[RMDB]
RNA sequence: GGGAACGACUCGAGUAGAGUCGAAAAUGAUUAUGGGGAUUUAAUCAAUCAAAAGUAUUUGGAAAAUAAAAAUAGCAUAAUAAAAUCCUCCAAAUUCAUAGGAAACGGUGGAGGAAUAACCGCUACAACCAUCGGAUUUAUUCGUAAAUCCGAUGGUAAAAGAAACAACAACAACAAC
Reactivity to 2A3 in 0.01 (KOAc 150mM, MgCl2 10mM, bicine 150mM(pH8.5), 24C), signal-to-noise 1, nucleotides 027 to 126: u030g000a000u050u170a030u080g050g000g000g140a040u030u000u300a080a050u130c160a000a000u050c000a000a120a050a070g190u110a120u000u050u140g060g000a000a040a030a160u270a170a190a210a010a000u040a010g010c000a000u030a160a000u000a010a300a000a000u000c000c040u040c080c000a080a120a000u200u120c070a070u080a080g240g070a020a030a090c120g100g000u100g080g030a040g010g000a010a010u000a010a000c040c040g000c010u050a000c090a020